[RMDB]
RNA sequence: GGGAACGACUCGAGUAGAGUCGAAAAUUUUAGCUGGUGAACUGAUGAUAUCAUUUCUUUCCCCGUCAGAUCGACCCUGUUGAUCUCAAAUACUAAUUGCCAGUUUUGUCUGAUGCAUCAGCGUACACAAAUACAUCCUCUUCGGAGGAUGUAUUUGAAAAGAAACAACAACAACAAC
Reactivity to DMS in 0.01 (KOAc 150mM, MgCl2 10mM, bicine 150mM(pH8.5), 24C), signal-to-noise 5, nucleotides 027 to 126: u010u000u010u010a100g030c020u010g030g020u000g000a160a090c070u000g010a050u010g000a110u010a300u010c050a070u000u000u000c090u000u000u000c010c010c000c100g010u020c060a020g010a030u000c120g010a050c070c170c080u020g020u000u000g000a060u010c080u000c110a050a040a080u000a070c150u000a040a050u010u000g010c090c040a050g010u000u000u000u000g020u000c050u000g000a060u000g000c040a030u000c020a040g010c040g010u010a090c210a130
Reactivity to 2A3 in 0.01 (KOAc 150mM, MgCl2 10mM, bicine 150mM(pH8.5), 24C), signal-to-noise 4, nucleotides 027 to 126: u030u050u020u130a010g000c010u000g020g010u010g030a090a040c040u040g030a020u030g070a060u100a090u250c060a090u060u120u050c040u040u050u000c000c000c000c000g040u020c010a000g000a050u050c030g020a040c050c030c070u070g030u050u040g050a040u030c060u000c080a090a110a070u170a080c030u080a050a120u070u030g040c020c010a010g000u030u010u050u040g030u020c010u000g010a010u040g010c010a020u000c010a010g010c010g050u140a020c100a010